[RMDB]
RNA sequence: GGGAACGACUCGAGUAGAGUCGAAAACUGUUGACCAUGGUCCUCAACUGGGCAAAAAUGGGAGCGGUGACUGUGUUCCACACCUGGACCUCACCUGGACCAGGUGACUCUGGUCCCCCUCUGGGUCUCACCGUGCUCUAGUGACUGUGAACCCCACCCAAAGGAUGAUAUUCGUAUCAUCCUUUGGAAAAGAAACAACAACAACAAC
Reactivity to 2A3 in 0.01 (KOAc 150mM, MgCl2 10mM, bicine 150mM(pH8.5), 24C), signal-to-noise 2, nucleotides 027 to 156: c040u050g020u100u080g030a060c010c000a010u030g010g030u040c030c010u080c020a140a140c150u130g010g000g040c030a060a030a040a030a150u120g010g020g000a030g070c050g030g000u040g020a040c080u060g020u040g060u240u090c050c040a060c030a020c030c060u050g030g010a060c000c000u030c020a100c050c060u030g020g000a020c000c010a000g010g030u030g040a030c050u000c030u090g040g020u060c050c000c000c000c000u090c050u040g010g000g040u020c040u010c050a060c010c030g050u030g050c010u070c030u170a080g040u050g150a000c010u000g000u000g030a020a030c020c010c000c000a030c000
Reactivity to DMS in 0.01 (KOAc 150mM, MgCl2 10mM, bicine 150mM(pH8.5), 24C), signal-to-noise 1, nucleotides 027 to 156: c040u000g010u000u000g010a150c030c020a100u000g000g020u010c020c060u010c060a130a180c060u000g000g000g000c030a020a030a000a090a100u000g000g010g010a050g000c030g030g010u000g010a100c100u000g050u000g010u000u020c050c080a090c030a050c040c000u000g060g000a100c020c020u000c100a110c090c090u000g010g020a050c040c020a010g030g010u000g010a030c230u000c030u000g020g010u000c010c000c020c010c000u010c040u020g010g030g000u000c020u010c040a040c000c010g040u000g000c010u000c030u000a100g020u000g000a060c050u010g010u000g020a060a150c050c010c010c010a130c300